[RMDB]
RNA sequence: GGGAACGACUCGAGUAGAGUCGAAAAGAUAUGGAGAAUGAUCCGCAAGCCGUUUGACGUGCAUCUCUGUUUCGGAAACGAAACAGAGAUGCACCGAGGCUUGACCCGGACAAUGUUCUCCUAAGUCCACUUUAUACUUCUUCGGAAGUAUAAAGUGAAAAGAAACAACAACAACAAC
Reactivity to DMS in 0.01 (KOAc 150mM, MgCl2 10mM, bicine 150mM(pH8.5), 24C), signal-to-noise 3, nucleotides 027 to 126: g010a110u010a300u000g000g010a010g000a040a010u000g010a060u000c010c010g000c010a020a000g010c000c010g030u000u020u010g010a060c300g000u010g010c000a000u010c010u000c000u000g030u010u000u010c000g000g000a120a120a240c010g020a010a000a010c000a000g000a000g020a000u010g010c000a000c010c000g010a090g000g020c000u000u000g000a080c300c230c070g020g020a010c020a030a020u000g000u000u000c000u000c000c000u010a040a150g010u000c040
Reactivity to 2A3 in 0.01 (KOAc 150mM, MgCl2 10mM, bicine 150mM(pH8.5), 24C), signal-to-noise 2, nucleotides 027 to 126: g040a070u200a100u260g010g000a020g000a030a020u090g070a120u080c000c000g000c020a010a000g030c010c020g070u070u200u290g090a070c060g010u010g040c000a020u000c010u000c020u020g050u050u000u000c030g060g060a090a150a120c050g040a030a000a010c000a000g040a000g000a010u000g000c020a000c010c020g000a010g000g020c000u000u010g000a020c080c000c000g020g000a010c010a000a040u040g020u000u000c000u020c040c000u020a210a020g040u010c030
The record gives the reactivity of an RNA of 177 nucleotides to DMS and 2A3. Source: RMDB library TTRINS, as collected in RNAgym. For 2A3 the reverse transcriptase was SuperScript II with manganese. The DMS profile rests on 3,903 reads.